[RMDB]
RNA sequence: GGGAACGACUCGAGUAGAGUCGAAAACUAAUUUAUCCACUCCGAUUGCGGCAAAGUUGGUGACGAAAAGUACGUUAACUGGGAAGAACUUUCAUCUACAUGACUUUUGACGUUAUUACUUUCGACGUUGGCCAAGAUGACAGAGUAGAGAAUGUCAAAAUGAUAUACGAUUCGUCGUAUAUCAUUUAAAAGAAACAACAACAACAAC
Reactivity to 2A3 in 0.01 (KOAc 150mM, MgCl2 10mM, bicine 150mM(pH8.5), 24C), signal-to-noise 4, nucleotides 027 to 156: c010u050a050a160u100u090u150a130u030c030c020a030c040u020c000c020g120a110u020u130g030c050g020g000c050a100a030a070g040u060u050g040g020u010g010a020c020g020a050a020a020a030g040u040a030c040g020u030u030a080a030c060u050g020g040g040a040a080g040a090a040c030u040u130u080c050a100u000c030u090a080c030a140u110g070a090c020u020u050u040u120g030a010c010g020u020u060a080u100u100a090c030u040u050u070c030g040a030c010g010u020u010g070g010c020c000a020a030g030a040u020g010a010c050a040g020a010g050u100a010g030a010g030a070a070u050g030u110c050a040
Reactivity to DMS in 0.01 (KOAc 150mM, MgCl2 10mM, bicine 150mM(pH8.5), 24C), signal-to-noise 6, nucleotides 027 to 156: c050u010a080a090u000u010u010a130u010c020c040a080c040u010c020c020g010a140u010u010g000c100g010g000c040a080a040a110g030u000u000g000g040u000g000a120c030g000a060a070a060a060g020u000a050c130g010u000u000a070a100c080u010g010g000g000a090a120g010a080a080c070u010u000u000c060a070u000c030u000a080c080a170u010g010a050c040u000u000u010u000g030a080c060g010u000u000a100u000u000a060c080u000u000u000c020g030a060c020g030u010u000g030g020c000c030a060a120g010a090u000g010a180c050a050g010a070g040u000a070g010a100g020a090a100u000g010u000c060a060

Chemical mapping of a 207-nucleotide RNA with 2A3 and DMS. The RNA was probed in 150 mM KOAc, 10 mM MgCl2 and 150 mM bicine (pH 8.5) at 24 C. The 2A3 profile rests on 6,389 reads. For DMS, 17,800 sequencing reads were counted.